[RMDB]
RNA sequence: GGGAACGACUCGAGUAGAGUCGAAAAAUAAAACGAUUGAUCUCUAAGCACGGGCAAGACGACGUAUGAAUUGUAAAACUUGACCACGUACACACACAUUGGUGCGUUCAUCACGUACAUCUGUCUCUGCAUCUGACGAUAGUGCGGAUCGGUGCUCCGAUCAGUACGCGUUCGCGCGUACUGAUCGAAAAGAAACAACAACAACAAC
Reactivity to 2A3 in 0.01 (KOAc 150mM, MgCl2 10mM, bicine 150mM(pH8.5), 24C), signal-to-noise 4, nucleotides 027 to 156: a000u240a010a070a030a000c110g070a060u060u120g020a050u010c010u040c060u140a080a070g000c010a030c050g000g010g000c040a060a030g020a030c070g030a030c020g070u100a030u090g060a090a070u120u170g090u210a020a080a030a090c070u050u150g020a030c040c020a050c040g040u090a040c080a020c030a000c010a000c020a170u060u190g060g010u000g020c000g010u020u060c020a030u050c040a020c060g000u040a050c010a040u020c010u030g020u020c000u000c020u090g030c030a110u040c080u100g030a030c050g030a090u050a130g040u060g020c020g020g000a040u050c060g000g040u040g040c010u030c050
Reactivity to DMS in 0.01 (KOAc 150mM, MgCl2 10mM, bicine 150mM(pH8.5), 24C), signal-to-noise 1, nucleotides 027 to 156: a070u030a080a220a120a060c070g040a160u000u000g010a140u000c020u000c010u000a040a130g060c000a040c100g000g030g140c000a070a140g000a120c020g030a050c030g060u000a030u010g010a040a070u020u020g020u000a100a060a070a050c070u010u000g030a060c050c030a060c040g000u000a090c060a130c000a040c070a130c070a190u000u000g050g000u000g020c110g030u000u010c100a040u000c100a020c040g010u000a000c000a070u000c010u020g010u000c000u000c050u010g000c060a170u000c060u010g000a100c050g010a030u000a040g010u000g000c000g010g010a040u020c000g010g020u020g020c050u000c060
This 207-nucleotide RNA was probed chemically with 2A3 and DMS. The reactions ran in a buffer of 150 mM KOAc, 10 mM MgCl2 and 150 mM bicine (pH 8.5), at 24 C. The DMS profile rests on 1,916 reads.